The data come from the RNA Mapping Database (RMDB), library OK2TRN. The record gives the reactivity of an RNA of 177 nucleotides to 2A3 and DMS. For 2A3 the reverse transcriptase was SuperScript II with manganese. The reactions ran in a buffer of 150 mM KOAc, 10 mM MgCl2 and 150 mM bicine (pH 8.5), at 24 C.
[RMDB]
RNA sequence: GGGAACGACUCGAGUAGAGUCGAAAAGCGGGGCGCACAUUGCGGCGGGUGGUGACGCGCAAGCUGCAGACCACGACUGUGCUGAGCGCGUACGUGCGCCACGUGGACGUGCCUCUGGCGGCUGUGCCCAACGGAUGCACUUCGGUGCAUCCGUUGGAAAAGAAACAACAACAACAAC
Reactivity to 2A3 in 0.01 (KOAc 150mM, MgCl2 10mM, bicine 150mM(pH8.5), 24C), signal-to-noise 2, nucleotides 027 to 126: g080c040g000g000g060g000c010g000c000a030c020a060u150u300g080c020g040g010c010g010g030g130u120g000g070u110g080a030c040g000c030g000c000a010a000g000c060u130g010c030a010g030a270c040c070a100c200g240a050c030u000g000u030g000c030u010g000a080g100c010g020c000g000u020a020c020g030u060g070c000g000c000c020a010c010g000u010g000g030a050c040g050u040g040c000c020u050c060u080g050g080c050g020g010c060u100g040u140g110c010
Reactivity to DMS in 0.01 (KOAc 150mM, MgCl2 10mM, bicine 150mM(pH8.5), 24C), signal-to-noise 2, nucleotides 027 to 126: g030c020g030g000g020g000c010g030c010a050c010a110u000u010g030c040g010g000c010g040g020g000u000g000g010u010g000a050c040g000c030g080c020a260a020g000c030u000g030c030a000g010a070c090c080a130c210g020a180c010u000g030u010g000c030u000g010a110g000c010g000c010g030u010a040c110g020u010g000c000g000c030c000a020c010g020u010g000g010a110c140g030u000g010c030c000u000c050u000g010g000c070g020g000c080u010g000u010g000c110